The data come from the RNA Mapping Database (RMDB), library OK3TST.
Chemical mapping of a 207-nucleotide RNA with 2A3.
RNA sequence: GGGAACGACUCGAGUAGAGUCGAAAAGAUAAAAAGUGUAGAGGGUAUUAUAAGGUCUUCUAGGCCAUUGUAAGCACUUUGGCAUUUAACUGAGUGAGACUGGCAUUCAGUGCAAGGUUUUAAGUAGAGGAAUGGUGUGCCUGCUUUGGCUGCUGCCCUACCGAGGGACUUUCGAGUCCCUCGGUAGAAAAGAAACAACAACAACAAC
Reactivity to 2A3 in 0.01 (KOAc 150mM, MgCl2 10mM, bicine 150mM(pH8.5), 24C), signal-to-noise 1, nucleotides 027 to 156: g010a080u090a090a100a000a010a020g050u050g020u200a070g040a090g020g020g010u010a050u180u120a100u080a170a000g000g000u000c020u040u020c020u040a000g010g000c030c040a000u020u080g030u070a060a120g030c050a020c030u030u060u060g000g060c070a020u090u060u050a060a140c050u070g000a010g010u000g000a000g000a060c040u040g000g000c020a020u000u000c010a000g020u010g050c000a010a010g010g000u060u060u070u150a080a080g020u090a010g020a010g000g070a080a030u070g020g020u040g030u070g020c040c010u040g040c110u100u070u080g010g000c020u060g080c040u050g020c050c060

The RNA was probed in 150 mM KOAc, 10 mM MgCl2 and 150 mM bicine (pH 8.5) at 24 C.